Chemical mapping of a 177-nucleotide RNA with DMS and 2A3. The reactions ran in a buffer of 150 mM KOAc, 10 mM MgCl2 and 150 mM bicine (pH 8.5), at 24 C. The data come from the RNA Mapping Database (RMDB), library OK2TRN.
[RMDB]
RNA sequence: GGGAACGACUCGAGUAGAGUCGAAAAGUCAUGGGGCUAUACAGAACUAACAGACCACAUACGUCGGUUUUACCAGUGGGUUUUGAAUCAAGAGCCAUAUGAUGAGUUAGCACGAACUGGUAAAGCAUGAGAAUAUUGCAUUCGUGCAAUAUUCUCAAAAAGAAACAACAACAACAAC
Reactivity to DMS in 0.01 (KOAc 150mM, MgCl2 10mM, bicine 150mM(pH8.5), 24C), signal-to-noise 5, nucleotides 027 to 126: g010u000c030a030u010g010g000g010g010c020u010a060u010a140c070a060g010a030a040c050u010a080a090c130a090g000a070c020c070a060c120a130u010a080c240g000u000c110g010g010u000u000u000u000a020c010c020a020g010u000g000g000g000u000u000u000u000g010a100a110u000c230a050a110g010a050g020c040c020a070u010a030u010g020a060u000g000a110g020u010u010a070g010c100a080c120g010a080a040c020u000g000g010u000a020a030a050g020c060a110
Reactivity to 2A3 in 0.01 (KOAc 150mM, MgCl2 10mM, bicine 150mM(pH8.5), 24C), signal-to-noise 3, nucleotides 027 to 126: g000u020c010a010u060g050g000g000g050c000u040a040u010a200c020a060g050a070a020c000u010a050a040c040a040g040a040c040c020a030c060a140u260a090c080g060u030c050g120g010u000u030u030u020a010c010c000a010g000u050g080g010g020u000u070u010u110g040a020a030u130c050a120a100g040a020g240c010c010a030u020a040u100g020a010u020g000a030g230u090u160a020g050c050a010c120g080a130a020c040u010g000g000u030a030a040a020g040c040a070